[RMDB]
RNA sequence: GGGAACGACUCGAGUAGAGUCGAAAAGAUCAACAAACGUUAGCGGACCUUACGGCGAAUGCGCUUGCUAAACUUGAUAGCAUCAUUAAUGAGGAACAGCCGGAUAUGAUUUUAGUACAUGGUGAUAAUCGUACGACGUGUUCGCACGUCGUACGAUAAAAGAAACAACAACAACAAC
Reactivity to 2A3 in 0.01 (KOAc 150mM, MgCl2 10mM, bicine 150mM(pH8.5), 24C), signal-to-noise 2, nucleotides 027 to 126: g040a060u160c000a000a080c050a020a180a020c020g100u210u240a010g040c000g030g000a060c000c000u060u070a060c030g010g020c020g000a100a070u140g000c050g000c030u010u010g000c000u070a000a050a300c000u020u020g110a040u140a130g030c000a000u020c050a050u080u290a190a090u210g090a090g040g000a070a150c050a000g050c050c000g000g000a000u000a040u270g300a210u040u220u000u150a020g000u000a030c000a000u040g010g000u050g080a150u120a160
Reactivity to DMS in 0.01 (KOAc 150mM, MgCl2 10mM, bicine 150mM(pH8.5), 24C), signal-to-noise 1, nucleotides 027 to 126: g000a150u010c070a060a270c280a190a020a180c230g000u070u010a060g020c000g050g020a000c000c000u020u010a010c130g000g060c070g000a110a000u000g000c020g000c000u000u000g070c000u000a090a170a190c100u030u000g040a000u000a000g050c070a210u010c120a140u060u000a100a040u040g050a100g010g000a260a020c000a100g000c060c000g050g020a010u030a100u030g000a210u000u000u000u030a030g000u000a020c030a070u000g000g000u050g000a020u040a070